[RMDB]
RNA sequence: GGGAACGACUCGAGUAGAGUCGAAAACAAUGAUGAGCAAUUCGCUAUUGCCGCCUAAAAACGGUUAGCCGGGGCUGCUAGAGCCUUGUUACCAAAGAUAGCCGGCGGGGACUUCGGUCCCAGUCGUUGAAGGGCUGUACGUUCGCGUACAGCCCAACACGAAGCAGAAGUUCGCUUCUGCUUCGUGAAAAGAAACAACAACAACAAC
Reactivity to 2A3 in 0.01 (KOAc 150mM, MgCl2 10mM, bicine 150mM(pH8.5), 24C), signal-to-noise 1, nucleotides 027 to 156: c030a020a080u250g060a070u180g020a090g060c070a090a200u150u070c050g000c020u020a040u030u280g020c010c030g000c000c010u080a060a040a040a000a000c000g000g030u080u020a010g030c010c000g000g010g000g000c020u070g020c010u060a020g000a000g160c000c010u060u020g050u080u090a040c020c010a010a020a000g070a060u010a000g000c030c000g000g010c020g000g010g000g000a000c000u050u030c230g050g000u000c010c000c000a000g010u000c000g020u020u080g050a080a130g000g000g000c030u000g000u000a020c000g020u030u040c280g010c000g070u000a000c000a000g030c020c010c000a000a000